[RMDB]
RNA sequence: GGGAACGACUCGAGUAGAGUCGAAAAAGACCUGAAGUCUAGGCAACGUACGGGAGACGUAGUUCUUCAAUCACAUGACGCCUAGGGGAAAGUCCCCGGAUCUCGGGUAGAAAGUGCCGUGCGCUACCAAUAUAGGGCCAUUCGUGGCCCUAUAUUGAAAAGAAACAACAACAACAAC
Reactivity to 2A3 in 0.01 (KOAc 150mM, MgCl2 10mM, bicine 150mM(pH8.5), 24C), signal-to-noise 5, nucleotides 027 to 126: a000g050a040c020c000u020g080a070a030g090u010c020u030a020g000g000c020a050a030c060g050u080a020c060g030g050g000a030g030a010c040g200u140a080g030u100u000c000u040u040c010a000a170u120c030a020c030a150u100g050a050c030g000c000c000u040a030g030g010g010g030a100a160a020g070u080c000c000c000c030g030g060a150u020c090u010c060g050g000g000u040a030g110a050a120a010g040u060g030c040c020g050u040g020c030g000c010u080a120c010
Reactivity to DMS in 0.01 (KOAc 150mM, MgCl2 10mM, bicine 150mM(pH8.5), 24C), signal-to-noise 7, nucleotides 027 to 126: a060g010a100c010c010u000g010a120a150g000u010c020u010a020g010g000c030a140a250c100g010u010a060c300g010g000g010a020g000a020c020g020u030a050g020u030u000c000u000u000c030a070a100u020c170a070c070a040u010g000a110c300g010c010c000u010a020g010g000g000g000a110a130a130g000u000c010c010c000c020g000g000a090u000c070u010c050g010g010g000u000a050g000a090a060a050g010u010g000c050c050g010u010g000c030g010c060u010a050c120